[RMDB]
RNA sequence: GGGAACGACUCGAGUAGAGUCGAAAAACUCAGAGUACAUACUUCUUUAUGUACCCAUAUGAACAUACAAUGCUAUGGAAUGUAAAGAAGUAUGUAUUUUUGGUAAACCGGCCGGUUCGCCGGCCGGGCCAUAUCUUACCUUCGGGUAAGAUAUGGCAAAAGAAACAACAACAACAAC
Reactivity to DMS in 0.01 (KOAc 150mM, MgCl2 10mM, bicine 150mM(pH8.5), 24C), signal-to-noise 1, nucleotides 027 to 126: a110c080u000c060a080g000a000g010u000a020c000a010u000a040c000u000u000c000u000u000u000a020u000g010u020a220c300c000c000a040u000a000u010g000a150a130c120a170u000a090c300a150a120u000g030c060u010a020u000g000g000a160a070u020g000u010a000a010a000g000a050a020g010u000a000u000g000u000a000u000u010u000u000u010g020g010u000a020a110a300c010c000g000g040c000c020g000g020u000u010c190g010c030c000g010g040c010c000g000g020
Reactivity to 2A3 in 0.01 (KOAc 150mM, MgCl2 10mM, bicine 150mM(pH8.5), 24C), signal-to-noise 2, nucleotides 027 to 126: a020c070u050c020a000g000a000g060u000a000c000a010u010a010c000u010u020c000u010u000u010a020u020g010u100a180c030c000c000a000u020a060u210g100a120a030c030a000u300a070c080a180a170u180g040c050u010a010u000g000g030a030a020u100g010u000a000a000a010g000a000a010g000u010a000u000g010u000a000u000u040u000u010u010g020g010u070a040a010a060c010c000g000g050c020c010g030g060u020u050c190g020c070c000g010g020c000c010g000g010